[RMDB]
RNA sequence: GGGAACGACUCGAGUAGAGUCGAAAAUAGCAGCGUUACGGGUCAAUUCCAUCUUCGCAUGAUAGUACGGUAGUUUGAAACCUCGUCGCGCAAUCUCAACUCCGAUUGUAUCAUCAGCAUCAAGAUUGAAGAAAUAUACACCACGUGUUUGUGACCCCUCAUUAUCAGUAUUCGUACUGAUAAUGAGAAAAGAAACAACAACAACAAC
Reactivity to 2A3 in 0.01 (KOAc 150mM, MgCl2 10mM, bicine 150mM(pH8.5), 24C), signal-to-noise 9, nucleotides 027 to 156: u140a010g050c060a010g020c020g070u080u100a040c050g010g010g030u050c040a040a060u040u020c010c020a020u010c010u070u060c050g040c060a050u090g060a060u090a070g110u100a060c020g020g060u070a040g040u050u050u120g070a100a090a040c030c040u090c050g100u060c050g020c010g000c090a030a070u040c020u010c040a020a040c030u000c030c030g090a150u040u130g060u100a040u050c030a020u010c050a030g030c010a030u070c060a060a030g030a080u030u080g020a050a020g070a050a120a010u200a020u050a040c070a030c060c040a050c080g040u040g050u080u100u110g060u050g050a060c020c000c000
Reactivity to DMS in 0.01 (KOAc 150mM, MgCl2 10mM, bicine 150mM(pH8.5), 24C), signal-to-noise 3, nucleotides 027 to 156: u000a090g010c040a040g040c020g000u000u000a080c080g000g010g010u010c060a120a220u000u000c010c030a100u000c050u000u000c040g010c050a150u020g010a100u000a080g040u000a070c020g010g020u000a040g010u000u000u010g010a080a100a040c030c020u000c090g030u010c040g000c030g000c090a070a080u010c050u000c010a040a080c010u010c030c000g020a140u000u000g000u000a070u000c030a070u000c060a100g040c050a110u000c060a050a070g010a080u000u020g020a070a070g000a050a050a080u000a120u000a120c090a090c020c020a030c070g000u010g010u010u010u010g010u000g000a200c020c020c060
The record gives the reactivity of an RNA of 207 nucleotides to 2A3 and DMS. Conditions: 150 mM KOAc, 10 mM MgCl2 and 150 mM bicine (pH 8.5), 24 C. For DMS, 9,714 sequencing reads were counted. For 2A3, 9,976 sequencing reads were counted. DMS adducts were read by reverse transcription with MarathonRT. In probing experiments dimethyl sulfate is read out at A N1 and C N3, which are open when not base-paired.